[RMDB]
RNA sequence: GGGAACGACUCGAGUAGAGUCGAAAACAAGAGUCAAAAAGGCAGCUGAUGCUGCACUAAAACCAGUUAACCUCACAGCAACACGCAUGCCCACAGAAGAUGAUGGCAAACUUAAAACACCAUCUGGGUUGAUCGUUACAUUCGUGUAACGAUCAACAAAAGAAACAACAACAACAAC
Reactivity to DMS in 0.01 (KOAc 150mM, MgCl2 10mM, bicine 150mM(pH8.5), 24C), signal-to-noise 1, nucleotides 027 to 126: c010a100a030g000a080g040u000c060a000a150a060a100a060g030g000c050a040g070c000u000g000a080u010g010c000u000g030c000a090c110u000a070a040a070a090c030c100a110g060u010u000a000a060c110c020u020c020a040c100a070g000c060a010a040c080a020c080g000c070a040u000g010c040c010c000a080c140a070g000a120a130g000a070u000g000a020u000g030g030c140a000a000a030c140u000u000a120a040a060a110c150a080c040c030a030u000c000u000g010g000
Reactivity to 2A3 in 0.01 (KOAc 150mM, MgCl2 10mM, bicine 150mM(pH8.5), 24C), signal-to-noise 1, nucleotides 027 to 126: c030a010a060g060a000g110u130c040a000a000a000a130a000g050g000c000a000g000c030u100g040a150u300g000c000u010g000c020a070c020u080a020a060a050a040c000c000a030g000u100u000a060a030c020c000u000c010a050c010a030g010c020a020a050c010a060c070g030c020a070u100g050c020c020c010a030c020a010g080a080a000g040a030u130g000a000u030g020g020c080a040a000a050c040u140u120a020a110a000a000c020a050c010c020a000u000c010u050g130g040